An RNA of 177 nucleotides, treated with 2A3 and DMS and read out base by base. The RNA was probed in 150 mM KOAc, 10 mM MgCl2 and 150 mM bicine (pH 8.5) at 24 C.
RNA sequence: GGGAACGACUCGAGUAGAGUCGAAAAAAACAUAGCUCUCUGCUAGCCCGUAAGGGUGUGUACAGAGGGCGACACCUGCCCAGUGCUGGCACGUGAAGCUGGAGUUCAGUUCAGUGAAGCGCCAGUAACAUAGGUGUACAUUCGUGUACACCUAUGUAAAAGAAACAACAACAACAAC
Reactivity to 2A3 in 0.01 (KOAc 150mM, MgCl2 10mM, bicine 150mM(pH8.5), 24C), signal-to-noise 9, nucleotides 027 to 126: a000a000a000c090a030u150a020g000c000u000c000u000c000u010g010c010u010a040g010c000c000c000g030u060a150a180g010g000g000u050g010u020g010u050a060c000a000g000a000g000g000g000c000g010a000c010a040c000c030u080g030c000c010c010a030g020u040g020c000u000g010g000c060a040c230g050u050g090a090a010g000c000u010g010g020a030g020u210u240c120a080g020u030u010c000a010g010u070g170a140a010g000c000g010c010c000a000g010u020a020
Reactivity to DMS in 0.01 (KOAc 150mM, MgCl2 10mM, bicine 150mM(pH8.5), 24C), signal-to-noise 9, nucleotides 027 to 126: a020a030a050c170a090u030a160g010c000u000c000u000c000u000g010c030u010a300g020c000c000c000g000u060a120a110g000g000g010u000g010u010g010u040a120c010a010g020a010g010g000g010c000g000a040c190a060c090c060u010g010c010c010c010a180g010u010g000c000u000g000g010c010a060c060g010u010g010a160a230g000c010u000g010g000a020g010u020u030c240a150g010u000u010c010a020g000u000g000a150a220g010c040g000c000c000a000g000u000a070
For DMS the reverse transcriptase was MarathonRT.